[RMDB]
RNA sequence: GGGAACGACUCGAGUAGAGUCGAAAAAGCGCCUACGUACGCGUAGGCGCAAAAUGCAUUCUGGGAUUCUGACUGUGACCUGUGUGUGUCUGAUUCACAUCACAGGCAGAGUUCUAGCUAUGCGUAACAUAUUAGUCUACUUCGGUAGACUAAUAUGAAAAGAAACAACAACAACAAC
Reactivity to DMS in 0.01 (KOAc 150mM, MgCl2 10mM, bicine 150mM(pH8.5), 24C), signal-to-noise 8, nucleotides 027 to 126: a080g010c010g010c000c000u000a010c000g020u010a090c240g030c020g040u000a010g000g010c000g020c000a010a000a050a040u010g000c000a010u000u000c000u000g000g000g000a000u000u000c000u000g000a030c010u000g000u000g000a030c230c240u000g000u010g020u000g010u010g010u020c190u040g000a120u010u010c000a010c010a080u000c000a010c000a000g000g010c000a000g000a020g020u000u000c000u000a000g010c170u000a000u000g010c010g020u020a080a210
Reactivity to 2A3 in 0.01 (KOAc 150mM, MgCl2 10mM, bicine 150mM(pH8.5), 24C), signal-to-noise 9, nucleotides 027 to 126: a000g000c000g000c000c010u000a000c010g020u020a010c230g000c010g100u000a000g000g010c000g000c000a000a010a000a000u070g000c000a000u010u000c000u010g000g000g010a000u000u000c000u010g010a020c010u010g010u010g040a050c020c080u050g030u000g010u000g020u010g140u140c130u180g120a140u120u060c000a000c000a020u060c000a010c000a000g000g000c000a000g000a000g000u000u010c000u000a000g000c070u040a000u000g000c000g010u010a060a010
This 177-nucleotide RNA was probed chemically with DMS and 2A3. The RNA was probed in 150 mM KOAc, 10 mM MgCl2 and 150 mM bicine (pH 8.5) at 24 C. For 2A3 the reverse transcriptase was SuperScript II with manganese.